[RMDB]
RNA sequence: GGGAACGACUCGAGUAGAGUCGAAAAUGACUCUGACACCGGCGCACCGACGGCAGGCGACGACGUGAGUGCUCUUGUAGGCAGCGACGGAUGCGGUGCACCGACGACGGACCUCUUCGCUACCACGAGGGAUGCACUGGUUCGCCAGUGCAUCCCUAAAAGAAACAACAACAACAAC
Reactivity to 2A3 in 0.01 (KOAc 150mM, MgCl2 10mM, bicine 150mM(pH8.5), 24C), signal-to-noise 1, nucleotides 027 to 126: u220g030a000c010u020c010u020g120a060c030a000c130c000g000g000c000g000c090a080c000c000g050a020c010g000g090c030a040g100g100c010g000a000c000g020a030c000g070u050g200a140g080u070g010c060u040c000u000u160g060u030a210g000g040c130a030g000c040g020a000c000g100g010a040u170g040c010g010g030u000g000c030a110c040c020g050a060c030g000a050c020g000g000a030c000c000u000c050u170u030c000g020c010u040a020c050c000a090c200g020
The record gives the reactivity of an RNA of 177 nucleotides to 2A3. It was measured as part of the RMDB library OK1LIB. 2A3 adducts were read by reverse transcription with SuperScript II with manganese.